Chemical mapping of a 207-nucleotide RNA with 2A3.
It was measured as part of the RMDB library OK3TST.
Reactivities are rounded to 0.1 and cut off at 0 and 3.
Reactivities are given for positions 27 through 156.
RNA sequence: GGGAACGACUCGAGUAGAGUCGAAAACAUGGUGGCAAGUACGUCGCGAUAUUGCCCCACCUGCAAUAGAAGCGUAGACAUCAACUGUAGCGAGAGCUACUCAACUUAUGGACCUUAGAGCAUGCGAAGACGACCGGUCCUGUCGGAAUUCGCUAGAACGUACGGGACGUUUCGACGUCCCGUACGUAAAAGAAACAACAACAACAAC
Reactivity to 2A3 in 0.01 (KOAc 150mM, MgCl2 10mM, bicine 150mM(pH8.5), 24C), signal-to-noise 1, nucleotides 027 to 156: c050a040u070g000g070u080g020g000c010a040a060g010u080a000c090g080u000c010g090c070g070a070u070a040u110u010g000c010c000c010c000a050c000c010u010g000c020a030a080u010a090g040a150a000g060c010g050u070a040g020a080c030a050u080c010a040a050c100u070g000u040a000g010c000g000a030g000a000g040c000u020a030c060u040c050a070a160c000u210u150a030u020g000g030a040c000c000u030u050a030g000a010g070c010a030u080g000c000g000a050a000g080a090c000g010a030c020c020g090g020u040c010c010u040g000u000c000g000g050a180a090u070u040c000g000c010u000a020g070a090